An RNA of 207 nucleotides, treated with 2A3 and DMS and read out base by base. For DMS the reverse transcriptase was MarathonRT.
[RMDB]
RNA sequence: GGGAACGACUCGAGUAGAGUCGAAAAGGUAUCCGACGGUAUCCGACGGUAUCCGGCACUAUCGGAGGGUAUCCGACGGUAUCCGACGGUAUCCGACUAUAUCAGACUGUCGCGGGCGAUAUAGGACAGUAUAGGCCGGUAACACACGGUCUGAUACGCGAAGGGAAAUUUUCGGAUUUCCCUUCGCAAAAGAAACAACAACAACAAC
Reactivity to 2A3 in 0.01 (KOAc 150mM, MgCl2 10mM, bicine 150mM(pH8.5), 24C), signal-to-noise 3, nucleotides 027 to 156: g010g000u020a050u120c000c000g000a010c010g000g000u000a020u160c000c010g010a020c010g040g000u000a020u030c010c030g070g060c180a120c210u300a240u270c240g080g010a050g040g010g020u030a030u110c000c000g000a000c000g000g010u020a050u060c010c010g000a000c010g030g000u040a010u030c000c000g000a000c020u020a010u020a000u080c030a060g110a200c040u090g020u240c060g040c080g190g000g050c030g020a010u010a000u000a040g130g030a050c070a030g030u010a020u060a030g030g020c000c000g070g070u190a250a010c040a020c010a020c090g000g010u000c010u010g020a010u030a060c090
Reactivity to DMS in 0.01 (KOAc 150mM, MgCl2 10mM, bicine 150mM(pH8.5), 24C), signal-to-noise 1, nucleotides 027 to 156: g020g020u020a030u010c060c000g000a300c090g000g050u000a000u030c020c020g000a250c110g080g020u000a010u000c020c020g000g070c150a240c170u020a000u020c090g000g000a300g020g000g000u000a020u020c020c020g010a300c130g000g000u000a000u000c000c000g010a250c080g030g020u000a020u000c020c000g000a190c040u000a050u000a050u000c000a100g020a030c020u000g000u000c120g050c070g010g070g000c060g020a020u000a020u010a070g070g000a050c070a180g030u000a080u000a050g000g000c000c000g070g040u010a060a120c060a180c070a080c000g000g020u000c000u000g020a040u000a010c140

The reactions ran in a buffer of 150 mM KOAc, 10 mM MgCl2 and 150 mM bicine (pH 8.5), at 24 C. For 2A3 the reverse transcriptase was SuperScript II with manganese. Values cover nucleotides 27 to 156.